[RMDB]
RNA sequence: GGGAACGACUCGAGUAGAGUCGAAAACUUCAAUGGUUCGCCAUUGAAGAAACAUGGUAAACGCUGACACCAUGAAAGAUCGAAAAACGAUCUAAGCGUAAAAAAGUAGUCAGUUCGCUGACUACAAUCAUCCAAGGAAGUUCGCUUCCUUGGAUGAAAAAGAAACAACAACAACAAC
Reactivity to 2A3 in 0.01 (KOAc 150mM, MgCl2 10mM, bicine 150mM(pH8.5), 24C), signal-to-noise 2, nucleotides 027 to 126: c000u010u010c000a010a000u010g010g000u030u070c160g040c040c000a020u010u000g000a000a010g000a030a020a000c000a000u020g040g060u290a200a190a030c010g000c010u010g050a040c030a040c100c000a000u000g050a090a040a000g000a000u020c010g100a090a010a000a020a300c020g010a000u000c000u010a040a020g020c000g010u070a020a060a020a070a040a030g010u010a000g020u000c000a000g000u030u070c160g000c090u010g000a000c010u010a000c000a000a010
Reactivity to DMS in 0.01 (KOAc 150mM, MgCl2 10mM, bicine 150mM(pH8.5), 24C), signal-to-noise 2, nucleotides 027 to 126: c000u000u000c000a000a020u000g010g010u000u000c230g000c010c000a000u000u010g010a000a010g000a110a070a100c070a020u000g000g000u010a070a070a010c000g000c010u000g060a240c140a070c020c000a000u010g000a090a270a030g030a010u000c010g010a070a080a070a140a240c020g020a000u010c010u000a120a110g000c000g030u000a000a070a070a100a090a060g000u000a020g030u000c000a010g010u000u010c180g070c010u010g000a020c010u000a000c000a020a080
Conditions: 150 mM KOAc, 10 mM MgCl2 and 150 mM bicine (pH 8.5), 24 C. An RNA of 177 nucleotides, treated with 2A3 and DMS and read out base by base. As a SHAPE reagent, 2A3 marks flexible, mostly unpaired nucleotides at the ribose 2'-OH. The 2A3 profile rests on 2,482 reads. Source: RMDB library M2PK50, as collected in RNAgym. Values are in units of 0.01, from 0 to 300, in steps of 10.